An RNA of 307 nucleotides, treated with 2A3 and DMS and read out base by base. The data come from the RNA Mapping Database (RMDB), library POS240. Reactivities are given for positions 27 through 266. The reactions ran in a buffer of 150 mM KOAc, 10 mM MgCl2 and 150 mM bicine (pH 8.5), at 24 C.
[RMDB]
RNA sequence: GGGAACGACUCGAGUAGAGUCGAAAAGAAACACGAUUAGAAUAAGAAUCACUAAGGUUAUAGGGAAUGAUGAUGGGUGACUCAAUUCUUAGAAUAUCGAAACGAUGAAGGAGGUUAGUGUGAGGAUUUUCAUGUAAGAUGUCACUAGCUUCCUUCUUACAUGCAAAGUUCUCACAUGUUCCUUCAAGGAAGCUAGUGACAUAAGAAUUGAGUCAAUUUCAUCUACUAUCGUUUCGAUAUUCUAGUGAACAUUAUCCCUAUCGUGUAGAGCAGUGUUCGCACUGUUCAAAAGAAACAACAACAACAAC
Reactivity to 2A3 in 0.01 (KOAc 150mM, MgCl2 10mM, bicine 150mM(pH8.5), 24C), signal-to-noise 6, nucleotides 027 to 266: g070a010a140a000c010a000c000g000a010u060u180a060g040a090a020u140a100a020g040a070a040u050c000a010c040u050a080a100g160g010u150u110a100u090a110g070g030g030a090a080u090g040a030u030g030a030u110g100g130g120u080g050a030c020u030c080a040a110u040u010c000u020u040a010g010a030a000u020a020u020c010g000a010a010a000c030g040a010u050g090a080a080g180g090a040g060g070u130u110a060g040u120g040u040g130a080g070g010a020u090u070u050u080c020a010u060g020u040a030a030g020a110u030g000u010c000a000c000u000a000g000c000u000u000c000c010u030u010c010u000u010a000c000a000u010g040c050a190a080a130g100u240u110c090u030c060a020c000a010u000g010u030u050c030c010u120u090c030a000a010g000g010a010a000g000c000u000a000g010u000g010a000c010a000u000a000a000g020a040a000u010u020g000a000g010u030c010a000a000u010u020u040c000a010u000c000u020a020c010u010a000u000c000g000u000u000u000c000g010a000u000a000u010u000c000u000a000g010u000g010a010a000c010a020u020u040a020u040c010c000c010u000a010u010c000g000u010g020u040a040
Reactivity to DMS in 0.01 (KOAc 150mM, MgCl2 10mM, bicine 150mM(pH8.5), 24C), signal-to-noise 8, nucleotides 027 to 266: g000a150a150a020c010a010c010g000a050u000u020a040g010a110a010u010a060a070g000a200a170u010c020a030c020u010a080a080g000g000u010u010a050u000a050g010g010g000a100a050u020g010a020u000g010a090u010g010g010g020u010g010a060c080u000c050a070a160u010u000c010u010u000a020g000a020a010u000a010u000c010g010a020a010a010c010g020a010u000g010a090a120g010g000a040g010g000u020u010a030g020u010g010u000g000a040g000g000a070u000u010u020u010c020a020u000g000u010a080a050g000a010u000g000u000c010a010c010u000a000g000c010u000u000c000c000u000u000c120u000u000a010c010a010u000g000c160a070a060a110g010u000u010c060u000c050a230c010a010u000g000u000u000c170c100u010u010c250a030a010g000g000a010a010g010c000u000a010g000u000g000a000c020a000u000a000a010g000a060a030u000u000g000a110g000u000c070a020a030u000u010u010c030a020u000c020u010a050c090u010a030u000c010g010u000u000u000c000g010a000u000a000u000u000c000u000a010g010u000g000a020a090c160a140u000u000a030u000c050c020c010u000a010u000c000g020u000g000u000a140